This 177-nucleotide RNA was probed chemically with 2A3 and DMS. The data come from the RNA Mapping Database (RMDB), library 15KREP. For DMS, 1,602 sequencing reads were counted. The RNA was probed in 150 mM KOAc, 10 mM MgCl2 and 150 mM bicine (pH 8.5) at 24 C. For 2A3, 2,864 sequencing reads were counted.
RNA sequence: GGGAACGACUCGAGUAGAGUCGAAAAGUCCUCCUUACGGAUGCCCAGGUCGGACCGCGAGGAGGUGGAGAUCCCAUGCCGACCCGAAGAGGAAAGGAGGACACGGACGACAAACCGUAAGUUCUACCGAUGUUAUCUACUUCGGUAGAUAACAUCGAAAAGAAACAACAACAACAAC
Reactivity to 2A3 in 0.01 (KOAc 150mM, MgCl2 10mM, bicine 150mM(pH8.5), 24C), signal-to-noise 3, nucleotides 027 to 126: g010u000c000c010u020c010c000u030u010a030c040g220g010a120u170g070c030c010c020a010g020g010u020c010g020g020a110c040c010g040c040g090a150g050g030a030g030g060u020g050g020a150g000a060u040c000c000c010a000u100g000c000c010g020a030c000c010c030g070a080a060g080a040g050g080a090a020a010g030g010a020g000g010a010c030a030c050g030g040a020c010g010a010c050a020a090a000c020c010g020u030a080a040g020u010u000c010u020a130c030
Reactivity to DMS in 0.01 (KOAc 150mM, MgCl2 10mM, bicine 150mM(pH8.5), 24C), signal-to-noise 3, nucleotides 027 to 126: g000u000c000c000u000c000c010u000u000a180c070g020g030a140u010g000c090c040c070a180g010g000u000c020g010g000a220c060c040g020c100g020a090g000g010a050g010g050u000g010g010a060g010a110u000c010c010c010a120u000g020c010c000g030a040c010c020c020g020a060a080g000a180g000g030a080a060a020g000g000a080g040g000a030c030a000c090g000g020a300c070g020a060c140a070a090a070c060c020g000u000a150a100g010u020u000c010u000a100c160